[RMDB]
This 177-nucleotide RNA was probed chemically with DMS and 2A3. It was measured as part of the RMDB library OK2TRN. Reactivities are given for positions 27 through 126. The reactions ran in a buffer of 150 mM KOAc, 10 mM MgCl2 and 150 mM bicine (pH 8.5), at 24 C. The DMS profile rests on 5,758 reads.
RNA sequence: GGGAACGACUCGAGUAGAGUCGAAAAAUCAGACAGAGAGGUAUAACUGUGAUUUCCAUUUCGCACCGAAUGAAUCUUUUGAAGUACCACACCCACAUCCUCCGGUUCGACGGACAGGGAGGAUGGACUACGAUAAAGACUUCGGUCUUUAUCGUAGAAAAGAAACAACAACAACAAC
Reactivity to DMS in 0.01 (KOAc 150mM, MgCl2 10mM, bicine 150mM(pH8.5), 24C), signal-to-noise 5, nucleotides 027 to 126: a070u000c070a060g010a130c110a060g000a100g020a090g010g020u000a040u000a060a170c030u010g010u000g010a060u010u000u010c080c020a060u000u000u000c080g030c090a070c100c060g000a060a060u000g000a060a080u000c020u000u000u010u000g010a050a170g000u000a050c040c030a100c140a150c020c000c020a130c020a000u000c010c000u000c000c010g010g010u000u000c020g010a180c290g000g000a020c020a040g000g020g000a010g010g000a010u000g010g000a170
Reactivity to 2A3 in 0.01 (KOAc 150mM, MgCl2 10mM, bicine 150mM(pH8.5), 24C), signal-to-noise 5, nucleotides 027 to 126: a000u030c020a000g070a070c010a020g080a000g020a040g050g080u080a110u030a170a070c010u020g010u030g070a060u030u050u030c050c010a030u080u130u080c080g030c080a110c070c080g040a040a040u080g030a030a060u060c030u040u210u090u130g050a080a010g010u020a040c020c000a040c010a030c050c020c000a050c000a010u010c000c000u000c000c010g020g030u040u030c080g190a140c150g080g010a000c010a020g100g000g040a010g000g000a000u000g000g000a010
2A3 adducts were read by reverse transcription with SuperScript II with manganese.